[RMDB]
RNA sequence: GGGAACGACUCGAGUAGAGUCGAAAAAGGAUCAGUUACCUCGUAAAUCCAUCUGAAAAACAGUAAACGCAAACGACGAACAGUUUGCUCUAGCAGCUUAAUCGCUCGCUAGAUCUCACACCAGCUUGCCGAUGGGCUGGGCAGGGUCAAACCUGCACUCUGUAUUGCGCUUCGGCGCAAUACAGAGAAAAGAAACAACAACAACAAC
Reactivity to 2A3 in 0.01 (KOAc 150mM, MgCl2 10mM, bicine 150mM(pH8.5), 24C), signal-to-noise 1, nucleotides 027 to 156: a040g100g000a040u070c040a020g060u060u110a120c020c010u070c040g030u080a000a120a000u000c040c010a010u040c090u050g080a070a050a020a060a060c070a070g070u180a030a150a030c080g000c000a020a020a020c010g110a060c060g100a190a000c020a020g000u010u010u010g000c010u010c010u010a000g000c000a000g020c010u050u090a080a020u150c030g000c010u000c080g010c000u000a000g000a010u010c010u050c030a100c010a010c000c010a010g010c010u030u180g090c030c020g160a150u110g040g010g000c010u010g010g030g000c030a010g030g030g020u110c030a000a050a080c010c000u000g000c000a020